[RMDB]
RNA sequence: GGGAACGACUCGAGUAGAGUCGAAAAGGCCAGUGAGGUCGCUGGGCAGGCACCUAAGGAAAGAGAACCUAAACCCAGAUCUUUUGCCACUUGGAGCUCAUUCCUGGCAGUUGCCAAUGGGUCACAGGAGCAAAACAACUUUCGAGUUGUUUUGCUCAAAAGAAACAACAACAACAAC
Reactivity to DMS in 0.01 (KOAc 150mM, MgCl2 10mM, bicine 150mM(pH8.5), 24C), signal-to-noise 2, nucleotides 027 to 126: g030g010c030c020a130g020u000g010a190g030g010u000c060g000c020u020g020g010g030c130a060g010g000c030a040c030c030u000a020a060g000g020a080a050a050g000a030g030a100a060c020c030u000a050a040a090c080c010c060a090g000a080u010c030u000u000u000u010g000c060c100a080c100u000u000g000g000a080g000c040u000c060a100u000u000c040c050u000g020g010c030a180g010u000u010g030c010c060a060a120u010g000g000g030u000c160a100c180a090g000
Chemical mapping of a 177-nucleotide RNA with DMS. Values are in units of 0.01, from 0 to 300, in steps of 10.